The record gives the reactivity of an RNA of 207 nucleotides to 2A3. Reactivities are rounded to 0.1 and cut off at 0 and 3.
RNA sequence: GGGAACGACUCGAGUAGAGUCGAAAAAGUCAGAGGGCGCUACCAUGCAAACUAAGGCUGGCUACUCUUGCACAGAAUCACAUCUCGAUAAUUGUCAGUGCAAGAAGGACAAUUAUACCAUUUAAUGAAAACGUUUACCUGUUCGCAGGUAAACGAAGAGCACGCAAUUGUUCGCAAUUGCGUGCUCAAAAGAAACAACAACAACAAC
Reactivity to 2A3 in 0.01 (KOAc 150mM, MgCl2 10mM, bicine 150mM(pH8.5), 24C), signal-to-noise 1, nucleotides 027 to 156: a000g070u050c110a100g010a070g040g030g010c020g000c010u120a280c120c000a060u300g020c060a150a030a000c000u140a030a030g070g000c000u010g000g000c000u060a040c030u000c000u000u000g000c030a000c000a010g150a190a170u050c040a110c040a120u030c070u030c070g160a000u000a040a020u010u020g000u010c000a000g000u000g060c000a000a000g000a000a010g030g050a050c000a000a000u010u000a000u050a060c020c050a130u090u140u280a150a130u210g090a030a070a010a020c000g000u000u000u000a000c000c000u000g000u000u040c200g110c060a000g000g000u000a000a000a000c000g000a000a030